[RMDB]
RNA sequence: GGGAACGACUCGAGUAGAGUCGAAAACAAUAAUAUUGAUAUUCUCAUGAAGUAGGCAAAGAAUAAAAUCACUAGCAAGCUGGUAUAGUAAUUUCAUAUUACUACGCUUGAUGAGCAGUGAGAUACUAUAAAAGCAACCUUUCGAGGUUGCUUUUAUAAAAGAAACAACAACAACAAC
Reactivity to DMS in 0.01 (KOAc 150mM, MgCl2 10mM, bicine 150mM(pH8.5), 24C), signal-to-noise 2, nucleotides 027 to 126: c040a210a020u010a060a080u000a300u010u000g030a090u000a040u030u000c000u020c030a120u030g020a100a050g000u000a030g010g030c160a120a030a030g020a100a030u030a050a080a070a120u010c030a000c000u000a160g020c000a100a170g010c000u000g030g000u010a210u020a000g000u000a000a010u000u000u040c240a090u020a060u020u020a010c000u000a000c050g000c010u000u000g000a050u030g000a300g000c000a040g000u000g000a000g000a070u030a090c140u010
Reactivity to 2A3 in 0.01 (KOAc 150mM, MgCl2 10mM, bicine 150mM(pH8.5), 24C), signal-to-noise 2, nucleotides 027 to 126: c050a000a080u300a280a000u110a170u300u100g000a010u000a090u170u010c010u000c010a070u140g070a030a030g070u290a050g050g060c130a190a000a000g090a030a170u170a210a090a000a000u000c000a000c000u000a030g010c000a000a050g000c030u150g000g000u000a010u000a070g000u000a010a020u050u220u120c130a030u050a000u280u000a000c000u010a000c000g010c000u000u070g030a070u090g030a300g050c070a000g000u020g000a010g040a000u060a150c060u030